Overview
Structure probing data (DMS and 2A3) for a 177-nucleotide construct.
RNA sequence: GGGAACGACUCGAGUAGAGUCGAAAAGAUACAACAGCGCAAGCGUGCUGCGCAACUGCUGCUGACGUUGCAACGCUGACAAUCCGGCCAUGGCUUCCGCCUGGCUACUGUAAGUCAUGGAAGCGAGCACGCUUACACUUUUCGAAGUGUAAGCGUGAAAAGAAACAACAACAACAAC
Reactivity to DMS in 0.01 (KOAc 150mM, MgCl2 10mM, bicine 150mM(pH8.5), 24C), signal-to-noise 6, nucleotides 027 to 126: g020a130u010a060c120a100a150c050a090g010c030g020c050a100a090g000c040g020u000g000c060u000g010c040g020c020a160a080c110u010g010c050u000g020c050u010g000a090c110g020u000u000g010c070a080a100c060g010c010u000g010a090c120a060a120u000c060c060g000g000c010c030a070u010g010g010c000u000u000c120c090g010c070c090u010g010g000c020u000a030c150u010g010u010a060a050g020u010c020a050u010g010g010a080a040g010c010g000a100g000
Reactivity to 2A3 in 0.01 (KOAc 150mM, MgCl2 10mM, bicine 150mM(pH8.5), 24C), signal-to-noise 4, nucleotides 027 to 126: g040a010u160a110c050a130a020c000a070g000c020g000c040a060a050g000c020g030u060g070c040u090g000c010g000c020a080a160c090u180g010c030u070g010c010u050g060a040c030g020u030u040g010c030a090a050c020g000c020u010g010a020c060a040a040u040c030c010g040g010c050c000a090u120g080g000c010u090u010c030c040g020c020c050u030g020g000c000u020a020c000u040g090u180a080a010g010u010c010a010u040g010g020a020a010g030c020g020a020g030

The 2A3 profile rests on 6,763 reads.